[RMDB]
RNA sequence: GGGAACGACUCGAGUAGAGUCGAAAAGUGAGUACACCGGAAUUGCCAGGACGACCGGGUCCUUUCCAUUGGAUCAAACCCGCUCAAUGCCUGGAGAUUUGGGCGUGCCCCCGCAAGACUGCUAGCCUCUUUUAUCUGGGUUCGCCCAGAUAAAAGAAAAAGAAACAACAACAACAAC
Reactivity to DMS in 0.01 (KOAc 150mM, MgCl2 10mM, bicine 150mM(pH8.5), 24C), signal-to-noise 4, nucleotides 027 to 126: g040u000g020a110g040u010a060c010a100c030c000g000g000a050a020u000u040g000c030c010a040g000g020a070c100g000a040c150c020g000g010g020u000c060c080u000u000u010c090c130a200u010u020g020g010a040u000c210a100a130a030c010c000c000g040c300u000c030a110a100u010g000c030c010u020g000g000a060g000a030u010u020u000g000g000g000c030g020u010g010c010c010c000c020c010g010c100a090a030g010a100c050u000g000c010u000a090g010c080c080
Reactivity to 2A3 in 0.01 (KOAc 150mM, MgCl2 10mM, bicine 150mM(pH8.5), 24C), signal-to-noise 7, nucleotides 027 to 126: g120u080g040a040g020u020a020c030a040c020c010g020g020a040a060u050u040g040c010c000a010g000g020a040c050g010a010c010c020g000g000g020u050c010c010u060u070u080c050c070a260u120u260g000g010a020u050c090a030a090a060c000c000c000g000c010u010c020a040a110u250g040c000c000u000g020g000a020g010a010u010u020u060g130g010g010c010g010u020g000c000c000c000c000c020g040c010a020a060g070a070c050u070g040c020u090a040g010c010c020